An RNA of 177 nucleotides, treated with 2A3 and DMS and read out base by base. For 2A3 the reverse transcriptase was SuperScript II with manganese. Conditions: 150 mM KOAc, 10 mM MgCl2 and 150 mM bicine (pH 8.5), 24 C. DMS adducts were read by reverse transcription with MarathonRT. For DMS, 3,057 sequencing reads were counted. Values are in units of 0.01, from 0 to 300, in steps of 10.
[RMDB]
RNA sequence: GGGAACGACUCGAGUAGAGUCGAAAACCUCCAGCUGUGGAGCUAACUCCCGCUGGGAGGACAUCGGUAGGUGGGCAGUUUGGGUGGGGCGCCACUCCCCCGAAAAGGUAUCGGGGGAGCCCAAAGGUACCCUUCGUGAAUUCGUUCACGAAGGGUAAAAAGAAACAACAACAACAAC
Reactivity to 2A3 in 0.01 (KOAc 150mM, MgCl2 10mM, bicine 150mM(pH8.5), 24C), signal-to-noise 4, nucleotides 027 to 126: c000c000u000c000c020a020g000c000u180g040u300g160g000a000g000c070u070a080a300c000u000c000c000c000g000c000u020g040g020g000a010g000g040a060c040a130u110c060g040g050u110a060g060g070u120g060g000g010c070a060g060u080u190u120g080g000g060u220g010g010g020g000c030g000c000c010a010c010u010c000c000c000c000c000g000a000a010a010a130g220g000u230a060u070c000g000g000g000g000g000a000g000c000c000c020a080a050a000g030g020
Reactivity to DMS in 0.01 (KOAc 150mM, MgCl2 10mM, bicine 150mM(pH8.5), 24C), signal-to-noise 1, nucleotides 027 to 126: c020c000u000c000c000a010g000c020u040g060u050g010g000a020g030c300u060a120a100c010u000c000c000c030g010c010u000g000g030g020a020g020g000a110c140a090u010c070g020g000u020a110g030g000u030g020g010g020c070a080g020u020u010u010g000g000g000u010g010g020g000g070c170g030c040c000a250c000u010c000c010c020c010c030g000a000a060a160a150g030g010u040a100u000c020g000g000g000g000g000a000g000c060c030c050a070a090a130g000g030